[RMDB]
RNA sequence: GGGAACGACUCGAGUAGAGUCGAAAAUAUUGAGCACCUGCCAUGUGCAGGCCAGGCACGUGGGACAUGCCAAUGUUUACUCACAGAUCUCUGACCUCAGGGAACCAAUAUUCUAGGAAGGAGAGAUGGAUAAUAAACAACAGCCAAAACACAGAAACUAUGAAAAUGAUUUCGAUCAUUUUCAUAGAAAAGAAACAACAACAACAAC
Reactivity to DMS in 0.01 (KOAc 150mM, MgCl2 10mM, bicine 150mM(pH8.5), 24C), signal-to-noise 2, nucleotides 027 to 156: u000a090u000u010g000a200g000c050a080c020c050u000g120c000c010a080u000g010u010g000c000a110g030g020c060c100a060g000g040c000a030c000g070u010g000g000g010a200c160a060u010g000c000c030a060a140u010g030u000u010u000a120c050u020c050a290c050a090g020a300u000c000u010c020u000g000a300c010c020u030c050a130g010g020g000a060a070c030c030a070a070u000a050u000u000c030u000a100g010g010a050a300g000g000a030g000a020g000a160u000g000g000a170u000a040a080u010a030a040a100c010a070a110c070a080g010c070c020a070a060a070a060c050a070c050a060g010a150a070a170
Reactivity to 2A3 in 0.01 (KOAc 150mM, MgCl2 10mM, bicine 150mM(pH8.5), 24C), signal-to-noise 5, nucleotides 027 to 156: u090a010u000u060g010a050g010c030a040c050c090u070g050c030c020a070u050g020u040g000c030a050g060g100c040c020a100g030g000c000a000c030g010u020g000g010g030a040c050a060u060g000c010c000a020a040u030g000u020u040u050a090c070u040c040a170c010a100g040a080u000c010u000c010u030g040a050c020c010u040c140a040g000g040g060a030a070c070c010a090a080u110a130u250u020c020u040a020g020g020a030a010g000g000a010g000a000g000a020u020g000g020a040u050a170a040u090a050a170a020c060a040a020c020a070g040c030c010a060a070a040a020c110a010c010a020g090a060a050a010

Chemical mapping of a 207-nucleotide RNA with DMS and 2A3. The data come from the RNA Mapping Database (RMDB), library OK3TST.